[RMDB]
RNA sequence: GGGAACGACUCGAGUAGAGUCGAAAAAACAAGCUUAUCAAUUGAGGCACCAUGGGGAGCAAUUAAUGUUCAGUCAACCUACAAACCAACUGUAUCAACUGCAAACAUAGCACUUAGUUGGAGCUCAGUGGAACACAGAGGCAAUAAGAUUUUGGUCGGUGAAUGAAAGAUUCGUCUUUCAUUCACCAAAAGAAACAACAACAACAAC
Reactivity to DMS in 0.01 (KOAc 150mM, MgCl2 10mM, bicine 150mM(pH8.5), 24C), signal-to-noise 2, nucleotides 027 to 156: a060a070c060a020a080g000c040u010u010a090u000c050a040a150u000u000g000a120g020g000c030a070c030c030a040u000g010g000g010g010a150g020c040a040a050u010u010a040a040u010g000u010u000c040a050g040u010c050a080a100c020c030u000a120c100a060a060a090c060c000a010a040c040u010g020u000a060u010c030a080a060c050u000g010c050a090a090a080c080a080u000a070g000c040a080c080u000u000a090g020u000u010g010g010a080g020c010u000c030a010g030u000g030g000a080a050c080a050c060a030g000a110g020g030c030a040a090u030a050a120g020a160u000u000u010u000g000g010u020c120
Reactivity to 2A3 in 0.01 (KOAc 150mM, MgCl2 10mM, bicine 150mM(pH8.5), 24C), signal-to-noise 6, nucleotides 027 to 156: a000a000c090a040a010g030c040u100u110a070u190c040a120a130u100u070g030a040g010g020c020a000c050c010a070u050g030g000g010g010a050g020c010a020a010u060u150a090a030u150g040u060u060c020a010g030u040c020a050a060c040c030u070a080c060a050a090a070c030c020a030a040c050u030g010u080a080u110c040a050a070c020u070g040c050a030a130a050c030a120u150a040g020c040a020c060u090u070a020g010u040u030g060g020a030g010c000u010c040a020g010u020g030g020a020a000c040a000c010a050g050a010g040g000c010a010a040u110a110a040g050a120u060u090u040u070g080g020u110c110

The record gives the reactivity of an RNA of 207 nucleotides to DMS and 2A3. Source: RMDB library OK3TST, as collected in RNAgym. The 2A3 profile rests on 4,237 reads. For DMS, 4,210 sequencing reads were counted. The reactions ran in a buffer of 150 mM KOAc, 10 mM MgCl2 and 150 mM bicine (pH 8.5), at 24 C.